Record summary: Chemical mapping of a 207-nucleotide RNA with DMS and 2A3. Reactivities are given for positions 27 through 156. Conditions: 150 mM KOAc, 10 mM MgCl2 and 150 mM bicine (pH 8.5), 24 C. DMS adducts were read by reverse transcription with MarathonRT. It was measured as part of the RMDB library OK3TST.
RNA sequence: GGGAACGACUCGAGUAGAGUCGAAAAGACAAAGAAUUGUGACAUGGAAGGAUUAAAGUUAUAAGAAAAUGAUCCAUCAAGUUGUGGGAGGAUUCACAUUAAUUUCAUUGGAAUGUGAUGUCACAUGGAAUUGGCUUUGGAUCAAAGGAAACAAAUAGUCAUUAUCGGAGUUCGCUCCGAUAAUGACAAAAGAAACAACAACAACAAC
Reactivity to DMS in 0.01 (KOAc 150mM, MgCl2 10mM, bicine 150mM(pH8.5), 24C), signal-to-noise 2, nucleotides 027 to 156: g010a100c030a020a030a130g000a160a210u010u000g000u000g030a080c080a070u000g020g000a130a130g000g020a180u010u010a060a090a130g020u000u000a100u030a060a180g000a090a070a100a090u000g010a040u000c010c010a030u000c060a030a170g010u000u010g040u000g010g010g040a080g030g060a110u010u000c010a000c000a020u000u000a110a080u000u000u010c090a180u010u000g030g000a040a040u010g010u020g000a080u000g000u030c000a020c020a080u040g000g010a110a150u000u000g010g000c030u000u000u060g000g020a060u010c080a010a100a080g000g010a110a080a140c060a040a060a090u010a140
Reactivity to 2A3 in 0.01 (KOAc 150mM, MgCl2 10mM, bicine 150mM(pH8.5), 24C), signal-to-noise 2, nucleotides 027 to 156: g000a020c050a040a060a030g090a080a040u110u110g050u080g040a030c040a070u130g040g000a000a040g030g040a030u070u100a110a060a010g020u080u120a190u120a220a040g100a010a100a030a080u110g020a020u010c020c010a010u180c090a100a050g010u030u060g020u110g020g030g020a050g080g010a020u020u040c030a000c010a000u000u060a010a200u130u160u130c150a130u110u090g100g080a020a000u010g010u020g010a020u070g040u010c000a000c010a000u040g040g050a080a090u000u040g030g000c000u100u010u000g030g020a010u050c040a010a000a040g110g010a100a090a070c050a010a060a090u290a040